Chemical mapping of a 207-nucleotide RNA with DMS and 2A3.
RNA sequence: GGGAACGACUCGAGUAGAGUCGAAAAGAACGAAAAGGGAGGUCAAAGUAAAGGGGAUGUGGACGUUAAGUUUUAUCAUGUCGGAGAUGAUAAAGGCAACGCAGACUCUGUUCUUUAUGUGGAGGAUGUGAAUCUGAGUCAUCCAGAUUCGCACUUACGACAGCUUGAAAUUCGUUUCAAGCUGUCGAAAAGAAACAACAACAACAAC
Reactivity to DMS in 0.01 (KOAc 150mM, MgCl2 10mM, bicine 150mM(pH8.5), 24C), signal-to-noise 1, nucleotides 027 to 156: g020a100a080c100g010a080a060a050a040g030g030g000a050g020g020u000c050a040a040a060g000u000a060a050a050g010g010g080g030a110u010g010u010g020g000a060c000g000u010u000a060a160g010u000u000u000u000a020u010c040a020u020g030u010c060g000g030a300g010a060u000g000a030u000a000a050a240g000g000c120a090a060c040g060c030a120g000a120c030u000c020u010g020u000u000c000u000u000u000a090u040g020u010g000g000a130g030g050a090u000g020u030g000a000a010u010c000u010g000a110g020u000c090a120u030c090c000a040g000a020u000u040c000g000c020a050c110u010u000a120
Reactivity to 2A3 in 0.01 (KOAc 150mM, MgCl2 10mM, bicine 150mM(pH8.5), 24C), signal-to-noise 3, nucleotides 027 to 156: g010a020a020c060g030a000a000a010a060g050g020g000a070g000g010u070c050a060a020a070g080u140a070a150a040g000g010g010g010a050u080g040u080g040g030a030c040g000u030u050a010a030g000u010u020u020u000a040u020c070a050u040g150u140c070g050g000a080g010a060u100g000a010u030a020a040a040g050g000c020a040a030c060g000c010a010g030a090c010u010c030u100g090u140u020c020u010u170u070a140u170g060u070g050g060a020g060g000a040u060g010u010g000a000a000u000c000u010g020a030g080u130c060a070u030c040c000a000g000a010u010u000c000g000c020a030c020u030u040a010
The data come from the RNA Mapping Database (RMDB), library OK3TST.